[RMDB]
RNA sequence: GGGAACGACUCGAGUAGAGUCGAAAAGAUAUGGAUAUGUGAAGGCGAUAAGUCUGUGGUCGGAAACGACCAUUGGACUUUUGACGCCUCUCACAUAUCCUAAGUCAAACGCCUCUUCGGAGGCGAAGCUAUUACGUACCUUCGGGUACGUAAUAGCAAAAGAAACAACAACAACAAC
Reactivity to 2A3 in 0.01 (KOAc 150mM, MgCl2 10mM, bicine 150mM(pH8.5), 24C), signal-to-noise 2, nucleotides 027 to 126: g010a000u070a030u180g010g000a010u020a010u010g020u000g010a020a010g010g010c020g010a040u000a180a000g010u000c000u000g000u020g020g040u010c010g020g040a100a080a120c020g000a010c000c000a000u040u160g030g000a010c000u030u030u020u120g120a070c070g000c000c000u010c000u010c010a010c000a010u000a010u000c010c000u000a020a000g000u000c000a000a020a230c020g030c040c010u000c030u050u080c300g180g010a000g010g020c000g010a020a000
Reactivity to DMS in 0.01 (KOAc 150mM, MgCl2 10mM, bicine 150mM(pH8.5), 24C), signal-to-noise 2, nucleotides 027 to 126: g000a050u020a300u010g000g000a000u000a000u000g010u000g010a030a010g000g030c000g030a160u000a000a020g020u000c000u000g050u000g000g010u010c000g010g010a140a110a270c020g010a000c000c000a000u000u010g000g000a010c000u000u000u000u000g000a300c120g000c010c000u010c160u000c000a000c000a000u010a010u000c000c000u000a010a080g010u000c020a130a140a270c010g010c000c000u000c000u000u030c150g030g010a000g010g000c000g000a040a070
The data come from the RNA Mapping Database (RMDB), library TTRDES. Structure probing data (2A3 and DMS) for a 177-nucleotide construct. The reactions ran in a buffer of 150 mM KOAc, 10 mM MgCl2 and 150 mM bicine (pH 8.5), at 24 C. Reactivities are given for positions 27 through 126.